[RMDB]
RNA sequence: GGGAACGACUCGAGUAGAGUCGAAAAGUCCUGCCAUGAGACCGCAACGAGAGCAUGUCGCAUCGAAUGGACUCGGGGAGUCGGCAGCUUGCCCCACGGAUGAGCGCCUAAUGCUGGCAUUCGGGAAAAUAGACUGGAUAGUUCGCUAUCCAGUCAACUGCAUGCAAUGGUUCGCCAUUGCAUGCAGAAAAGAAACAACAACAACAAC
Reactivity to 2A3 in 0.01 (KOAc 150mM, MgCl2 10mM, bicine 150mM(pH8.5), 24C), signal-to-noise 1, nucleotides 027 to 156: g060u030c000c020u020g040c000c000a190u220g020a010g100a150c050c030g010c070a120a120c030g070a060g000a000g050c140a150u210g050u160c060g060c140a120u070c090g020a050a000u100g020g040a040c000u000c020g020g000g030g000a100g000u030c000g040g010c030a000g060c000u110u040g120c000c000c000c000a020c000g020g040a000u080g010a040g000c010g080c080c090u230a120a040u260g020c020u000g090g120c010a000u000u010c000g000g000g100a020a020a010a020u120a050g000a000c000u000g000g010a000u000a000g040u030u010c150g000c080u000a000u000c000c000a000g000u010c000a000a000
Structure probing data (2A3) for a 207-nucleotide construct. The reactions ran in a buffer of 150 mM KOAc, 10 mM MgCl2 and 150 mM bicine (pH 8.5), at 24 C. The data come from the RNA Mapping Database (RMDB), library M2RFPK.